[RMDB]
RNA sequence: GGGAACGACUCGAGUAGAGUCGAAAAGAACACCCACACUUACCGGUCAUAGUGCUACGUACCGUCCAGUCUAUCAUUGCCUUGAAUACUCCUGAGGUCCUGUGAGGUUGGAUGUAAGGGGCAUGCUUAAAGUCACAGCUGGUCUGUGGUACUAGUGUAACUUCCUUCCGUUCGCGGAAGGAAGUUAAAAAGAAACAACAACAACAAC
Reactivity to 2A3 in 0.01 (KOAc 150mM, MgCl2 10mM, bicine 150mM(pH8.5), 24C), signal-to-noise 1, nucleotides 027 to 156: g110a070a010c030a030c000c000c070a050c000a000c070u010u090a110c000c000g020g040u070c010a090u180a130g040u120g060c050u090a080c120g010u130a110c110c010g040u120c000c000a000g000u000c070u070a120u090c000a040u110u080g010c000c000u070u050g260a090a140u170a240c010u010c140c030u160g170a000g000g280u120c090c140u150g000u000g000a010g010g000u120u030g000g070a070u140g000u000a050a070g000g010g030g070c080a000u010g000c030u130u290a190a030a000g110u170c160a010c000a030g000c000u070g110g030u120c110u250g070u050g060g070u010a050c000u000a000g080u010g040